[RMDB]
RNA sequence: GGGAACGACUCGAGUAGAGUCGAAAAUACCGCAGGCCUGCGGUGCGGCAGUGUGGAGACCUGCCGUACGCCGUGUUGUUUUGACAACCGGGAGAAAGCGUAUGCGGAGGCAGCGCUUUCAGGGUCUAAAAGUAUGGGAUCUUCGGAUCCCAUACAAUCGUUCUAAAGCGUUCGCGCUUUAGAACGAAAAAGAAACAACAACAACAAC
Reactivity to 2A3 in 0.01 (KOAc 150mM, MgCl2 10mM, bicine 150mM(pH8.5), 24C), signal-to-noise 1, nucleotides 027 to 156: u070a020c000c020g040c040a010g000g010c000c000u070g030c000g030g000u000g000c000g000g000c020a000g020u100g000u150g280g190a070g000a090c010c010u000g000c000c000g000u000a000c000g020c000c010g070u070g020u180u010g000u050u160u160u210g060a000c000a000a000c010c000g030g000g000a020g000a000a010a000g000c000g010u040a300u180g030c050g010g060a020g300g000c000a000g020c010g000c000u010u000u010c000a000g000g000g000u010c020u010a050a060a060a020g000u010a000u000g000g000g000a000u000c040u050u110c200g100g000a000u000c030c000c000a000u000a000c000a000a000